[RMDB]
Structure probing data (2A3 and DMS) for a 207-nucleotide construct. 2A3 adducts were read by reverse transcription with SuperScript II with manganese. The 2A3 profile rests on 1,124 reads.
RNA sequence: GGGAACGACUCGAGUAGAGUCGAAAAAUAGCAAAAACUGCAAUUACUUUCGCACCAACAUAAUAGAAUGGUAACUGGAACAUAAUAGGUCUUCAAUAAAUAUUGUUGAAUGAGUGAGUGAAUGAGUUUUAAAUCAUACUCACCCGAAAGCCAGAUACAUUAAUGGUGCGUUCGCGCACCAUUAAUGAAAAGAAACAACAACAACAAC
Reactivity to 2A3 in 0.01 (KOAc 150mM, MgCl2 10mM, bicine 150mM(pH8.5), 24C), signal-to-noise 3, nucleotides 027 to 156: a020u060a000g030c030a040a060a070a030a050c030u050g080c040a050a040u180u080a100c030u100u100u080c070g010c030a030c030c030a040a100c010a040u250a180a050u060a140g170a140a040u050g020g000u040a080a010c040u070g020g020a100a010c030a030u140a140a050u040a140g050g000u020c020u040u000c030a030a010u070a100a110a040u240a110u130u080g030u000u010g030a080a060u080g010a050g050u010g010a010g030u020g110a070a070u030g000a010g040u130u110u090u260a140a210a000u010c000a000u040a080c000u000c000a000c000c020c000g030a050a010a000g010c000c000a000g050a100u150a090
Reactivity to DMS in 0.01 (KOAc 150mM, MgCl2 10mM, bicine 150mM(pH8.5), 24C), signal-to-noise 1, nucleotides 027 to 156: a080u000a110g000c040a070a070a060a080a070c000u020g020c020a150a050u000u000a040c050u000u000u000c040g000c080a110c000c030a050a120c050a150u000a040a100u000a130g010a050a040u000g020g070u030a020a070c000u010g000g020a070a060c050a050u010a060a110u000a120g000g030u000c000u000u010c030a060a070u000a070a230a110u000a050u000u010g010u000u000g000a090a080u000g020a000g000u000g000a080g010u000g000a130a020u000g000a030g010u000u000u000u020a010a040a110u010c030a060u000a040c010u010c000a020c000c060c000g000a030a050a120g000c060c030a090g040a180u000a080